Source: RMDB library OK1LIB, as collected in RNAgym. The record gives the reactivity of an RNA of 177 nucleotides to DMS and 2A3. Values are in units of 0.01, from 0 to 300, in steps of 10. For 2A3 the reverse transcriptase was SuperScript II with manganese. DMS adducts were read by reverse transcription with MarathonRT.

[RMDB]
RNA sequence: GGGAACGACUCGAGUAGAGUCGAAAAAUGCAAGUAGCGAACGAGACCAACAGCUCGCGCUGUGCAAACUCGAGAACUCGGGAGAAGGUGUACACGCGAGGAGCUCCGGGAGUUUGCGGACGCGCAGCCGUAGCGCGAUGUUCGCAUCGCGCUACGGAAAAGAAACAACAACAACAAC
Reactivity to DMS in 0.01 (KOAc 150mM, MgCl2 10mM, bicine 150mM(pH8.5), 24C), signal-to-noise 1, nucleotides 027 to 126: a140u020g000c060a000a180g010u000a140g070c010g010a110a050c040g000a250g010a100c000c050a080a120c250a030g000c020u050c000g010c060g010c060u000g000u000g000c020a000a060a050c000u000c000g000a080g000a030a090c150u060c070g020g040g000a080g000a110a100g000g000u000g000u010a000c000a070c100g050c000g010a070g000g010a080g060c000u000c110c300g000g040g000a120g000u000u000u040g000c020g010g000a020c120g000c300g020c010a080g050
Reactivity to 2A3 in 0.01 (KOAc 150mM, MgCl2 10mM, bicine 150mM(pH8.5), 24C), signal-to-noise 3, nucleotides 027 to 126: a000u110g030c040a070a000g030u040a010g110c030g040a020a020c020g020a040g200a230c010c010a030a070c030a020g070c010u000c000g020c010g000c070u000g000u020g000c000a000a000a070c000u010c000g060a040g030a170a110c100u030c040g020g030g010a140g020a060a070g150g030u050g010u050a020c050a000c100g020c020g050a040g040g030a010g010c000u070c060c040g060g000g000a070g000u010u020u040g000c000g070g040a010c040g010c000g000c040a020g030